[RMDB]
RNA sequence: GGGAACGACUCGAGUAGAGUCGAAAAGUCGACGACGUUUCUUCUGGAAAGAAGGAUAUAGAAGAUUACGAUCUUCACGAUUCUCAUGUCUUCUCCAAGGAAGAUGUCACGGACGAGAAUCUCAUGAAGAGUCUCCAAGCUCUUCAAGGCAUCGGUAUGUAGACACAAGAUUCGUCUUGUGUCUACAAAAAGAAACAACAACAACAAC
Reactivity to 2A3 in 0.01 (KOAc 150mM, MgCl2 10mM, bicine 150mM(pH8.5), 24C), signal-to-noise 2, nucleotides 027 to 156: g040u030c010g050a160c020g000a000c000g050u040u090u040c020u010u030c020u010g020g010a060a050a060g020a010a010g050g030a020u030a030u040a130g020a000a000g020a010u060u020a070c190g050a080u020c020u030u020c080a040c100g090a140u210u040c070u080c110a050u150g020u000c000u020u000c020u010c010c050a040a000g030g000a000a000g030a040u010g040u020c030a010c130g070g040a000c010g000a020g010a070a080u010c010u020c070a060u100g010a000a020g010a000g020u000c040u000c140c030a060a040g000c000u000c000u000u030c020a000a020g060g000c030a030u060c060g060g000u130a060
Reactivity to DMS in 0.01 (KOAc 150mM, MgCl2 10mM, bicine 150mM(pH8.5), 24C), signal-to-noise 1, nucleotides 027 to 156: g080u000c010g020a110c050g020a130c010g020u000u000u010c000u010u000c040u010g010g010a080a110a050g000a060a080g000g060a040u000a090u010a110g000a010a030g020a050u040u000a210c140g000a090u000c020u000u000c010a210c050g010a110u010u000c010u020c040a080u000g010u010c020u000u030c040u000c040c140a160a190g010g000a050a010g000a050u010g010u000c120a090c100g020g000a040c000g000a170g010a030a030u010c060u010c120a100u000g020a010a070g000a040g000u010c050u010c140c200a050a300g000c040u020c000u000u010c040a100a040g000g030c080a050u000c020g030g000u010a140
Chemical mapping of a 207-nucleotide RNA with 2A3 and DMS. It was measured as part of the RMDB library OK3TST. 2A3 adducts were read by reverse transcription with SuperScript II with manganese. DMS adducts were read by reverse transcription with MarathonRT. Values cover nucleotides 27 to 156. The RNA was probed in 150 mM KOAc, 10 mM MgCl2 and 150 mM bicine (pH 8.5) at 24 C.